This 207-nucleotide RNA was probed chemically with DMS and 2A3. DMS adducts were read by reverse transcription with MarathonRT.
RNA sequence: GGGAACGACUCGAGUAGAGUCGAAAAGUGGAACUCGUGACAGAUGUCUACGCCACCCUAGGCAUCGUGGAGAUCAUCGACGAGCUCUACCGGAGCAGUCGCCUGGCCAUCUACAUCGAGGACCUCGGUCGAAAAUACUGCCCCGCGAGCGCGACCGUCGAUGAUAAUAUUUCGAUAUUAUCAUCGAAAAAGAAACAACAACAACAAC
Reactivity to DMS in 0.01 (KOAc 150mM, MgCl2 10mM, bicine 150mM(pH8.5), 24C), signal-to-noise 3, nucleotides 027 to 156: g030u000g020g000a050a050c020u000c000g010u010g000a120c080a150g020a020u010g020u000c010u000a110c020g010c010c060a050c030c040c020u000a070g030g020c040a030u000c060g000u000g000g010a080g010a170u000c060a050u000c010g010a060c020g000a090g000c010u000c010u000a060c050c040g030g000a060g000c010a100g020u010c060g000c020c010u000g020g010c020c020a080u010c030u000a090c100a120u010c100g010a080g030g000a120c030c010u010c050g010g010u000c030g000a070a080a050a120u000a080c040u000g000c000c000c000c020g020c080g010a060g010c020g020c040g000a140c030c020g000
Reactivity to 2A3 in 0.01 (KOAc 150mM, MgCl2 10mM, bicine 150mM(pH8.5), 24C), signal-to-noise 6, nucleotides 027 to 156: g060u070g020g030a070a040c010u010c040g040u070g070a060c080a130g010a020u020g010u000c010u030a020c080g040c040c040a080c050c020c050u050a050g010g000c020a050u040c070g020u060g020g030a050g000a060u060c010a020u050c030g030a020c010g010a040g040c010u000c000u030a120c030c060g030g000a020g000c020a010g030u040c010g030c030c020u020g000g000c040c010a150u030c030u110a090c030a190u130c070g020a030g050g060a200c010c020u040c080g000g020u080c030g060a070a050a050a040u130a080c030u060g010c010c000c010c020g060c050g040a020g020c050g000c030g040a020c010c040g000